RNA sequence: GGGAACGACUCGAGUAGAGUCGAAAACCUGAGUUCGUACCAAGAACCGACACAGGUGCCCCUAGAUGAAUAGUCUAAGGCGUUUGGGAAUAAUGGAUGUGAGGGAACUCGGCCAAAUAGUCCCGUACCCCUAUAUGAGCUUCGGCUCAUAUAGGGGAAAAGAAACAACAACAACAAC
Reactivity to DMS in 0.01 (KOAc 150mM, MgCl2 10mM, bicine 150mM(pH8.5), 24C), signal-to-noise 3, nucleotides 027 to 126: c050c000u010g020a120g010u030u020c150g020u020a110c090c110a170a150g010a200a090c120c000g000a070c100a190c060a030g000g000u000g020c060c020c020c060u010a000g000a000u000g020a190a040u000a070g000u020c000u000a060a060g010g020c070g000u020u000u000g020g000g000a060a070u010a050a140u000g000g000a050u020g000u050g020a100g030g000g070a140a040c020u000c010g000g010c020c030a020a020a130u010a150g000u010c000c000c000g040u040a140
Reactivity to 2A3 in 0.01 (KOAc 150mM, MgCl2 10mM, bicine 150mM(pH8.5), 24C), signal-to-noise 3, nucleotides 027 to 126: c000c000u000g000a050g010u050u070c000g040u110a100c070c020a140a000g080a140a050c010c020g080a030c030a000c000a150g000g080u080g000c000c000c000c050u010a000g000a010u040g110a050a140u120a190g020u020c010u040a020a050g010g030c100g020u020u090u080g100g000g000a120a140u080a100a110u080g010g020a040u140g080u170g170a000g020g070g020a040a030c010u010c020g000g000c000c000a010a120a010u080a070g080u040c010c010c000g010u130a080